This 170-nucleotide RNA was probed chemically with DMS and 2A3.
Source: RMDB library 15KLIB, as collected in RNAgym.
DMS adducts were read by reverse transcription with MarathonRT.
The reactions ran in a buffer of 150 mM KOAc, 10 mM MgCl2 and 150 mM bicine (pH 8.5), at 24 C.
Reactivities are given for positions 27 through 129.
The DMS profile rests on 4,020 reads.
The 2A3 profile rests on 2,819 reads.
[RMDB]
RNA sequence: GGGAACGACUCGAGUAGAGUCGAAAAUUAUCCCGGGGAUCGGCCUCUGUCCCUCCAUGGUGAGCUCCAGGACCCCCAAAAGGAGGGGGGUGGGCCUUGGACCUCCAGGAGCCAUGGGAUCCGUGGAAUGCGGCCCGGUUCGCCGGGCCGAAAAGAAACAACAACAACAAC
Reactivity to DMS in 0.01 (KOAc 150mM, MgCl2 10mM, bicine 150mM(pH8.5), 24C), signal-to-noise 3, nucleotides 027 to 129: u020u010a080u060c040c010c060g010g000g030g000a080u000c010g100g000c000c020u010c090u120g000u010c020c060c070u030c000c000a010u000g000g030u000g010a200g000c210u000c000c000a000g030g000a150c050c000c000c000c000a040a090a070a030g070g030a130g010g000g060g020g000g110u050g030g030g090c020c050u070u020g010g000a070c000c040u010c010c260a080g040g060a080g010c060c070a020u000g000g020g010a090u130c140c070g000u070g040g000a140a130u060g000
Reactivity to 2A3 in 0.01 (KOAc 150mM, MgCl2 10mM, bicine 150mM(pH8.5), 24C), signal-to-noise 2, nucleotides 027 to 129: u270u090a010u140c000c000c000g000g010g010g000a040u020c020g040g010c000c000u060c060u100g060u080c000c020c000u000c000c000a030u040g000g040u120g050a040g020c030u000c000c000a030g000g070a020c000c000c000c000c000a110a090a000a050g290g010a140g020g000g000g000g000g010u080g010g060g030c000c000u000u000g040g010a010c000c000u070c000c000a000g060g070a060g000c000c010a000u000g000g000g000a080u080c070c020g030u140g000g050a010a010u000g000